Chemical mapping of a 177-nucleotide RNA with 2A3. Conditions: 150 mM KOAc, 10 mM MgCl2 and 150 mM bicine (pH 8.5), 24 C. Reactivities are given for positions 27 through 126. The 2A3 profile rests on 1,187 reads.
RNA sequence: GGGAACGACUCGAGUAGAGUCGAAAAAUGAACGUGGUGGGCGUAAGUUAGUAGAAGAUCUAAUGGUACGCGGUGGGUUUUCGACUGUACUCGAUACCACCACCACCACCAAGUCGUUCCCACCGAACUCUCGCUUUCUAUUCGUAGAAAGCGAGAGAAAAGAAACAACAACAACAAC
Reactivity to 2A3 in 0.01 (KOAc 150mM, MgCl2 10mM, bicine 150mM(pH8.5), 24C), signal-to-noise 1, nucleotides 027 to 126: a000u300g000a030a000c060g030u010g000g000u000g000g000g020c000g020u000a050a000g030u010u010a030g000u040a050g040a300a020g020a080u010c000u030a000a020u050g260g050u040a000c000g020c000g010g020u000g030g000g010u000u000u020u070c000g010a030c020u080g060u200a020c000u000c030g000a010u040a040c000c010a000c000c020a020c010c010a010c000c000a000c000c000a020a000g010u000c030g000u000u030c020c000c000a000c030c030g040a050a020